[RMDB]
RNA sequence: GGGAACGACUCGAGUAGAGUCGAAAAAGGCAAAAUAGCGAUUCUAUGGUGUGGCCCUUAACAUUAAACUGUACUAGAGAUACUGCUUUGCAAAAUAAUGAAAUAACACCAACCAAGCUUAAGGUUAGAUAGUGACGGAAUUCGUUCCGUCACUAUCAAAAGAAACAACAACAACAAC
Reactivity to 2A3 in 0.01 (KOAc 150mM, MgCl2 10mM, bicine 150mM(pH8.5), 24C), signal-to-noise 2, nucleotides 027 to 126: a020g120g010c040a080a080a000a080u090a060g030c010g020a020u120u010c030u040a020u140g030g000u050g000u030g060g040c020c020c000u080u100a030a060c030a030u070u120a100a060a050c020u010g020u010a000c040u050a050g000a010g030a110u000a190c020u100g010c020u090u000u050g000c020a050a060a020a130u080a040a070u100g080a100a040a020u160a020a020c050a040c000c010a000a010c020c000a040a010g090c010u120u070a070a060g010g000u010u030a030
Reactivity to DMS in 0.01 (KOAc 150mM, MgCl2 10mM, bicine 150mM(pH8.5), 24C), signal-to-noise 2, nucleotides 027 to 126: a120g010g000c050a020a070a080a070u020a010g000c020g020a120u020u000c050u000a080u000g000g040u000g010u010g000g000c000c040c050u020u000a030a100c080a070u040u040a040a090a100c100u000g000u000a010c090u000a030g010a060g020a150u000a030c070u000g000c040u000u040u000g000c030a010a070a050a130u010a040a060u040g010a070a050a130u000a070a060c080a070c030c030a050a090c040c050a050a080g010c080u000u000a120a040g000g020u000u000a100